RNA sequence: GGGAACGACUCGAGUAGAGUCGAAAAUUAAAUGCUUAGCAUUGGCUGAUUAUCUUAUUAAAGCAAGUGAUGAUCUCCCAAAACUUGCUACUAAUCCAAAAAAUUGGGAACCAAUACUUAAGAAUUAAGCUCAUCCUGGUUUCGACCAGGAUGAGCUAAAAGAAACAACAACAACAAC
Reactivity to 2A3 in 0.01 (KOAc 150mM, MgCl2 10mM, bicine 150mM(pH8.5), 24C), signal-to-noise 1, nucleotides 027 to 126: u030u040a070a070a000u070g040c070u040u000a000g000c000a070u020u020g070g050c000u000g130a090u160u100a150u200c000u180u120a090u070u150a240a000a000g000c000a000a000g070u070g090a260u000g020a020u170c000u300c000c000c000a020a080a020a020c000u000u030g000c000u030a000c040u110a000a220u000c080c040a080a090a090a180a090a300u130u300g000g000g000a000a000c000c000a000a070u000a090c000u090u000a050a050g000a040a040u280u150a070